[RMDB]
RNA sequence: GGGAACGACUCGAGUAGAGUCGAAAAGAUAUGGAUGUUUGGAGCUUGGACCUACAGGGUUCGGAAACGAACCUGUAGCUAGCUCGAUCCUAAGUCAAAGUGGACGACCGUUCGCGGUCGUCCACAACAUUCACUAAGUGUUCGCACUUAGUGAAUGAAAAGAAACAACAACAACAAC
Reactivity to 2A3 in 0.01 (KOAc 150mM, MgCl2 10mM, bicine 150mM(pH8.5), 24C), signal-to-noise 4, nucleotides 027 to 126: g010a010u060a030u150g010g000a020u060g200u250u300u300g280g010a020g010c040u140u190g150g090a300c030c010u010a010c020a060g220g110g070u060u020c020g020g000a030a040a010c000g000a000a000c000c000u000g000u000a000g000c010u010a000g000c000u000c000g000a010u000c000c010u000a070a010g020u020c060a170a050a100g010u020g010g000a010c000g000a010c030c010g080u090u120c300g000c020g140g010u010c000g000u000c020c000a000c000a000a000
Reactivity to DMS in 0.01 (KOAc 150mM, MgCl2 10mM, bicine 150mM(pH8.5), 24C), signal-to-noise 5, nucleotides 027 to 126: g000a030u000a220u010g000g000a000u000g000u010u010u010g020g010a020g010c010u010u010g040g010a130c300c000u000a000c000a010g000g010g010u000u000c000g010g000a040a050a100c000g010a010a050c000c000u000g000u000a000g010c030u000a010g010c000u000c000g010a020u000c000c000u000a040a120g010u000c020a070a130a150g010u000g000g000a040c000g020a020c010c000g010u000u010c200g020c020g010g010u000c000g010u000c000c000a000c000a010a100
Source information:
The record gives the reactivity of an RNA of 177 nucleotides to 2A3 and DMS. Conditions: 150 mM KOAc, 10 mM MgCl2 and 150 mM bicine (pH 8.5), 24 C.